RNA sequence: GGGAACGACUCGAGUAGAGUCGAAAAGCUAGAUCUCCCGACCCAAGCUCCUAGCACGGAUACCGAGCACCCACGCGGAGCACAUGCCGCGGAAUAGGCAAAAGUGUUGCGGACCUGCGUAGUUUCGAAGUAUGAAAAUCUUCGGAUUUUCAUACUUAAAAGAAACAACAACAACAAC
Reactivity to 2A3 in 0.01 (KOAc 150mM, MgCl2 10mM, bicine 150mM(pH8.5), 24C), signal-to-noise 5, nucleotides 027 to 126: g050c040u030a010g000a180u030c020u020c020c010c010g040a050c020c020c010a040a020g000c000u010c020c010u070a040g040c020a030c120g020g010a040u090a090c010c020g010a020g010c000a020c000c020c000a030c010g010c000g010g000a020g090c020a020c010a070u160g030c000c000g000c030g020g050a060a130u150a080g040g020c050a050a060a040a040g040u040g030u060u100g050c030g020g030a060c000c000u020g030c030g080u080a040g010u000u010u020c000g010
Reactivity to DMS in 0.01 (KOAc 150mM, MgCl2 10mM, bicine 150mM(pH8.5), 24C), signal-to-noise 5, nucleotides 027 to 126: g000c050u000a050g010a090u020c050u000c010c010c030g000a080c060c010c020a090a070g000c050u000c040c020u000a080g010c040a070c120g000g010a110u010a060c050c020g000a080g000c030a090c030c010c010a090c040g000c010g010g010a090g000c130a070c190a100u020g000c010c010g030c040g000g010a100a090u010a070g020g010c130a080a050a090a090g010u000g010u010u000g000c040g010g000a100c030c020u010g010c040g020u000a050g000u000u010u000c020g000